[RMDB]
RNA sequence: GGGAACGACUCGAGUAGAGUCGAAAAACUAAAGGAAAAAGAAAACCUAAUGUAAUAAACUCUCUAUACUUAGAGCCAGAAGUACUAGAAGACCAUUGUUGGCAUUUACAAGAAAAAUUUGAUGCAAAGGUAGUAAUUACUUCGGUAAUUACUACCUAAAAGAAACAACAACAACAAC
Reactivity to DMS in 0.01 (KOAc 150mM, MgCl2 10mM, bicine 150mM(pH8.5), 24C), signal-to-noise 2, nucleotides 027 to 126: a030c070u010a100a130a030g000g000a040a030a130a100a140g010a170a120a130a050c010c040u000a030a100u060g000u000a040a140u040a120a160a160c070u000c050u000c020u000a080u000a130c050u020u010a050g000a070g000c000c140a130g020a010a090g000u030a050c130u000a030g000a010a020g000a040c060c030a130u010u010g000u000u020g010g000c000a000u020u020u000a080c130a060a080g000a040a030a060a070a080u030u000u000g010a030u020g030c110a090a140
Reactivity to 2A3 in 0.01 (KOAc 150mM, MgCl2 10mM, bicine 150mM(pH8.5), 24C), signal-to-noise 2, nucleotides 027 to 126: a000c050u190a080a020a130g060g000a140a060a140a040a140g090a010a130a010a000c030c000u040a100a030u150g040u040a060a080u100a040a210a070c000u090c000u030c030u080a000u010a060c000u090u070a060g020a040g160c040c070a060g050a130a020g000u010a030c050u040a070g030a080a020g010a120c020c030a120u050u050g040u010u060g070g010c000a020u050u050u120a080c070a030a140g160a150a040a110a080a130u070u130u190g030a000u010g000c030a000a010